[RMDB]
RNA sequence: GGGAACGACUCGAGUAGAGUCGAAAACGGAGUUGAUGGGUUACCCAGUCAUUCUUCUGCUUGCAGGAGAGCCCGGUGUCCUUGUGAUGCCAAACCCGUGUUCCUAACAGAAUACAAACCCUUCCCACAGGGUUUAAUGGUUCGCCAUUAAACCCUGAAAAGAAACAACAACAACAAC
Reactivity to 2A3 in 0.01 (KOAc 150mM, MgCl2 10mM, bicine 150mM(pH8.5), 24C), signal-to-noise 9, nucleotides 027 to 126: c030g010g030a190g060u040u070g090a170u210g030g010g020u070u080a140c020c020c030a020g100u090c040a090u070u000c000u010u000c000u010g010c040u070u160g030c000a010g000g020a020g010a010g010c010c020c020g000g010u020g000u010c010c020u090u190g110u270g070a010u020g010c010c010a030a040a030c010c000c000g010u020g010u010u010c000c000u010a050a010c020a050g090a070a040u080a090c040a010a070a080c010c000c000u010u010c010c000c000a030
Reactivity to DMS in 0.01 (KOAc 150mM, MgCl2 10mM, bicine 150mM(pH8.5), 24C), signal-to-noise 4, nucleotides 027 to 126: c080g000g000a080g020u000u010g000a060u020g000g000g000u010u010a230c080c050c030a100g010u030c140a130u010u030c000u000u010c010u000g000c030u030u000g010c020a020g000g000a030g000a010g010c080c050c040g020g030u010g010u010c000c000u010u010g020u040g000a050u030g000c000c010a110a030a030c030c000c000g010u010g020u000u000c000c010u000a080a150c180a100g000a060a070u010a090c090a050a110a110c030c010c000u000u000c000c000c010a270